[RMDB]
RNA sequence: GGGAACGACUCGAGUAGAGUCGAAAAUGGAUCUCGCCCAGCCCGAUGCGGGUCUGCAGGCGUCUGGCCCAGCGCGGUGCCCACCAGCAGUCAUCGCCGAGCAGCUUCAUCACCGAUGGCACUAAAAGAAUAGGGCCAGUUUCGACUGGCCCUAUUCAAAAGAAACAACAACAACAAC
Reactivity to 2A3 in 0.01 (KOAc 150mM, MgCl2 10mM, bicine 150mM(pH8.5), 24C), signal-to-noise 1, nucleotides 027 to 126: u170g090g040a060u030c020u020c070g000c000c030c000a000g020c000c000c000g030a040u100g050c170g030g000g030u040c030u060g000c070a050g060g030c020g010u000c050u070g030g000c000c010c020a000g020c070g000c010g000g020u080g000c000c000c000a070c000c010a020g050c000a000g000u010c000a010u050c030g070c050c030g000a020g000c120a000g010c000u030u020c040a070u040c020a010c010c080g050a030u070g000g000c110a090c110u100a000a050a000a040
Reactivity to DMS in 0.01 (KOAc 150mM, MgCl2 10mM, bicine 150mM(pH8.5), 24C), signal-to-noise 1, nucleotides 027 to 126: u050g000g040a060u010c000u070c060g000c030c030c040a030g000c010c030c080g000a060u030g010c170g030g000g000u020c020u000g040c090a210g000g060c100g000u000c060u000g000g050c010c000c040a230g080c020g000c040g000g030u020g000c080c040c040a040c000c090a170g000c090a130g100u010c060a020u020c030g000c130c040g000a060g030c050a050g000c000u000u010c020a070u040c020a220c050c120g020a040u000g000g060c080a060c090u030a120a060a080a030
The record gives the reactivity of an RNA of 177 nucleotides to 2A3 and DMS. Source: RMDB library OK1LIB, as collected in RNAgym. The reactions ran in a buffer of 150 mM KOAc, 10 mM MgCl2 and 150 mM bicine (pH 8.5), at 24 C.